This 177-nucleotide RNA was probed chemically with 2A3 and DMS. For 2A3 the reverse transcriptase was SuperScript II with manganese. Conditions: 150 mM KOAc, 10 mM MgCl2 and 150 mM bicine (pH 8.5), 24 C.

[RMDB]
RNA sequence: GGGAACGACUCGAGUAGAGUCGAAAAUGGGAAGGUCCUAAAGGGCAAGACAGGCAAGGAGGGGCUGCUUGCUUUGCCUGCUCUCCUGGAUCCUUUGCCACCUGGGUGACAGGGCCUGGUGUCACUGGUUGAGAUCACCUUUCGAGGUGAUCUCAACAAAAGAAACAACAACAACAAC
Reactivity to 2A3 in 0.01 (KOAc 150mM, MgCl2 10mM, bicine 150mM(pH8.5), 24C), signal-to-noise 1, nucleotides 027 to 126: u100g010g000g010a000a030g020g020u000c040c050u100a250a070a070g070g000g000c060a090a000g030a040c010a010g000g060c000a010a010g020g000a050g040g100g040g090c040u050g100c020u080u070g040c000u100u050u020g000c000c030u010g000c030u010c000u030c010c010u020g000g050a090u250c000c010u060u050u080g160c000c000a050c020c010u020g040g040g020u010g020a020c020a020g010g050g000c000c030u050g000g060u030g000u000c020a000c030u050g110
Reactivity to DMS in 0.01 (KOAc 150mM, MgCl2 10mM, bicine 150mM(pH8.5), 24C), signal-to-noise 1, nucleotides 027 to 126: u010g000g000g010a070a030g000g040u010c020c010u010a090a090a040g000g000g000c040a080a030g010a050c030a030g000g000c070a000a020g020g010a090g010g020g030g030c060u000g000c020u010u010g010c010u000u000u010g010c000c000u000g010c060u000c020u000c060c110u000g020g000a050u010c010c030u000u000u000g020c030c010a110c040c020u000g020g000g000u000g000a060c050a060g010g010g010c040c040u000g000g020u000g020u000c030a020c030u000g000